[RMDB]
RNA sequence: GGGAACGACUCGAGUAGAGUCGAAAAGAAACCAUUCAAAUAUACCACAGUUUGUUUAACCUUUUGCCUGUUGGUUGAAGAUGCCUUUCAACAGGUGACUGGUUAGACAAACUGUGGUAUAUACAAAAGAAUUAGUUGUUUUCGAACAACUAAUUCUAAAAGAAACAACAACAACAAC
Reactivity to DMS in 0.01 (KOAc 150mM, MgCl2 10mM, bicine 150mM(pH8.5), 24C), signal-to-noise 4, nucleotides 027 to 126: g000a150a110a180c030c030a120u020u010c130a080a140a030u000a010u000a000c000c000a000c000a000g000u000u010u000g000u000u000u000a000a000c010c000u000u010u000u000g000c010c000u000g000u000u000g000g030u000u010g010a110a110g010a160u030g000c110c020u000u000u000c000a000a000c000a000g010g010u000g000a000c010u000g000g010u010u000a000g010a000c000a000a000a000c000u000g010u000g000g010u000a000u000a000u010a080c190a060a100a120
Reactivity to 2A3 in 0.01 (KOAc 150mM, MgCl2 10mM, bicine 150mM(pH8.5), 24C), signal-to-noise 3, nucleotides 027 to 126: g080a060a130a030c020c010a010u080u090c040a020a150a010u020a000u000a000c000c000a000c010a000g000u000u000u030g010u000u010u000a000a000c000c000u000u010u000u010g010c000c010u000g010u000u010g030g060u020u050g010a080a030g110a090u250g070c010c010u030u060u040c000a000a000c000a000g000g000u000g000a000c000u000g000g000u000u000a000g000a000c000a010a000a000c000u000g010u000g000g000u000a000u000a000u000a000c010a000a010a000

Source information:
Structure probing data (DMS and 2A3) for a 177-nucleotide construct. As a SHAPE reagent, 2A3 marks flexible, mostly unpaired nucleotides at the ribose 2'-OH. For 2A3, 3,642 sequencing reads were counted. It was measured as part of the RMDB libraries RFM100 and RFMREP. DMS adducts were read by reverse transcription with MarathonRT. For 2A3 the reverse transcriptase was SuperScript II with manganese. The RNA was probed in 150 mM KOAc, 10 mM MgCl2 and 150 mM bicine (pH 8.5) at 24 C.